[RMDB]
RNA sequence: GGGAACGACUCGAGUAGAGUCGAAAAACGCAAAUUGCUGCAAAAUUCACCCUCAGUGGAGGACUAGAAACACAACAUGUCCAAUUUAAAGCUCAGUUCACAAGCAGUUCAAUUCUGCUGGCAUCAGUAUUUAUACGACCUUCGGGUCGUAUAAAUAAAAAGAAACAACAACAACAAC
Reactivity to DMS in 0.01 (KOAc 150mM, MgCl2 10mM, bicine 150mM(pH8.5), 24C), signal-to-noise 2, nucleotides 027 to 126: a140c160g040c070a050a040a130u010u000g010c060u000g000c090a040a070a090a140u000u000c040a100c080c040c030u000c080a080g000u010g010g000a080g000g020a040c090u010a100g010a030a080a050c140a070c160a040a020c070a060u000g010u000c060c080a110a060u010u020u000a050a080a180g000c000u000c050a040g000u000u020c070a070c090a070a030g010c010a030g000u010u000c110a100a100u000u000c050u000g000c010u000g010g020c080a030u000c060a090g010
Reactivity to 2A3 in 0.01 (KOAc 150mM, MgCl2 10mM, bicine 150mM(pH8.5), 24C), signal-to-noise 1, nucleotides 027 to 126: a010c040g000c050a040a020a090u210u030g040c010u100g060c040a000a000a300a000u140u000c030a110c000c010c000u050c010a040g040u040g190g030a090g020g000a010c000u070a060g180a090a290a050c110a010c030a170a040c010a010u030g060u030c000c070a000a060u230u120u140a120a110a000g060c030u070c100a050g010u160u060c090a070c030a240a000g140c040a000g010u130u110c060a070a050u040u010c010u010g000c060u010g090g000c010a090u070c000a040g110